[RMDB]
RNA sequence: GGGAACGACUCGAGUAGAGUCGAAAAGAAAGAAGCUCUCUGCUGUGGCCUAUGGCUUUUUAUUCCUAUGUGAUUGCUGCUUUGAACUCAUGUAGGGCUGAAAGCCAUGGGCUACAGAGAGGGGAAAAUUAACGGUAAUGUUCGCAUUACCGUUAAUAAAAGAAACAACAACAACAAC
Reactivity to DMS in 0.01 (KOAc 150mM, MgCl2 10mM, bicine 150mM(pH8.5), 24C), signal-to-noise 6, nucleotides 027 to 126: g010a110a110a110g000a150a140g000c010u000c010u000c010u000g020c000u010g010u000g000g000c010c000u000a010u000g000g000c000u010u000u000u000u010a050u030u000c000c000u000a010u000g020u010g000a030u000u000g010c070u000g010c240u030u040u010g000a040a050c240u000c000a010u000g010u000a000g020g000g020c140u000g010a010a010a010g000c000c000a000u000g000g000g010c000u000a000c000a000g000a040g000a020g000g000g000g000a040a040a070
Reactivity to 2A3 in 0.01 (KOAc 150mM, MgCl2 10mM, bicine 150mM(pH8.5), 24C), signal-to-noise 6, nucleotides 027 to 126: g170a010a100a010g100a050a020g040c010u020c000u020c000u120g230c010u020g080u000g010g000c000c000u010a000u000g000g010c010u050u020u000u030u120a090u080u050c000c000u000a000u010g020u000g010a040u060u100g060c080u030g020c050u220u130u230g060a070a020c010u000c010a000u010g000u010a000g000g000g000c010u020g010a000a000a000g000c000c000a000u000g010g000g000c000u000a000c000a000g000a000g000a000g000g000g000g010a010a130a020
Annotation:
An RNA of 177 nucleotides, treated with DMS and 2A3 and read out base by base. It was measured as part of the RMDB libraries RFM100 and RFMREP.